The record gives the reactivity of an RNA of 177 nucleotides to DMS. High DMS reactivity at an A or C suggests that its Watson-Crick edge is free. Values cover nucleotides 27 to 126. For DMS, 1,710 sequencing reads were counted.

[RMDB]
RNA sequence: GGGAACGACUCGAGUAGAGUCGAAAAUUAGCGAUUCGUUGGAUGAUGACGGUGUUUACUCUUAUCGCCUGACCGGUCUUGCGCGUUCUGCCAAUGCCCAGCAGAAAGGGUCAGAAGAGCAGCGUUAUAUAAGCGGAACUUUCGAGUUCCGCUUAUAAAAAGAAACAACAACAACAAC
Reactivity to DMS in 0.01 (KOAc 150mM, MgCl2 10mM, bicine 150mM(pH8.5), 24C), signal-to-noise 2, nucleotides 027 to 126: u020u000a110g020c060g010a090u000u000c110g040u010u000g000g010a060u000g010a070u000g000a110c060g000g020u010g030u000u010u010a110c040u000c070u010u000a080u000c060g020c120c030u010g010a040c040c050g010g010u010c060u000u010g030c010g050c070g000u000u010c010u000g030c030c060a060a080u010g000c000c010c020a140g000c040a000g000a040a090a090g000g010g000u010c030a040g010a050a060g000a050g020c040a020g010c080g000u010u000a120
The data come from the RNA Mapping Database (RMDB), library OK2TRN.